RNA sequence: GGGAACGACUCGAGUAGAGUCGAAAAAGCUCAUUACGAUGAGCAGCUCUGCUCUCCGUGUUCACAGCGGACCUUGAUUUAAUGUCAUACAAUUAAGGCACGCGGUGAAUGCCAAGAGCGGAGCCAAAAGCUCGAGGGUAUUCGUACCCUCGAGCUUAAAAGAAACAACAACAACAAC
Reactivity to 2A3 in 0.01 (KOAc 150mM, MgCl2 10mM, bicine 150mM(pH8.5), 24C), signal-to-noise 3, nucleotides 027 to 126: a000g000c000u000c000a000u020u090a080c200g110a050u000g000a000g010c000a010g010c000u000c000u000g000c000u000c000u020c010c030g010u020g000u000u000c000a000c000a010g010c000g050g000a090c000c000u010u000g030a040u060u060u170a200a070u260g300u300c060a040u110a140c050a030a010u000u020a000a020g000g000c030a010c120g000c030g000g030u010g000a000a000u020g030c040c040a020a000g000a000g000c000g000g000a000g030c000c000a060a070
Reactivity to DMS in 0.01 (KOAc 150mM, MgCl2 10mM, bicine 150mM(pH8.5), 24C), signal-to-noise 2, nucleotides 027 to 126: a000g000c000u000c000a020u000u080a160c180g040a040u000g000a000g000c030a080g000c000u000c000u000g000c000u000c000u040c300c300g000u000g030u060u000c000a000c040a010g020c000g000g000a150c000c000u000u030g000a030u000u000u020a000a120u070g000u000c150a040u040a050c300a000a010u000u000a000a000g000g020c300a020c000g030c000g000g030u000g000a000a020u000g000c030c150a170a040g000a000g000c000g110g070a000g000c000c110a000a000